RNA sequence: GGGAACGACUCGAGUAGAGUCGAAAAGAUAUGGACGCUUACAGACAUGGUAACGUUCUUGCUCCUCGCAAUCGGAAACGAUUGGGAGGAGCAAGAACGUUACCAACAGCUGUGGCGUCCUAAGUCACGAUUUGUUUUAGUUCGCUAAAACAAAUCGAAAAGAAACAACAACAACAAC
Reactivity to DMS in 0.01 (KOAc 150mM, MgCl2 10mM, bicine 150mM(pH8.5), 24C), signal-to-noise 1, nucleotides 027 to 126: g010a080u010a300u010g020g000a010c000g010c000u010u000a010c020a010g000a090c100a200u020g000g010u000a000a020c000g010u000u000c000u000u000g010c020u000c000c010u000c040g010c000a030a000u020c000g000g000a140a060a300c010g020a030u000u030g000g000g070a020g020g020a020g000c000a020a000g000a010a010c020g020u000u010a020c000c000a010a020c160a130g000c000u000g040u000g020g020c010g010u000c010c010u000a010a040g010u020c040a260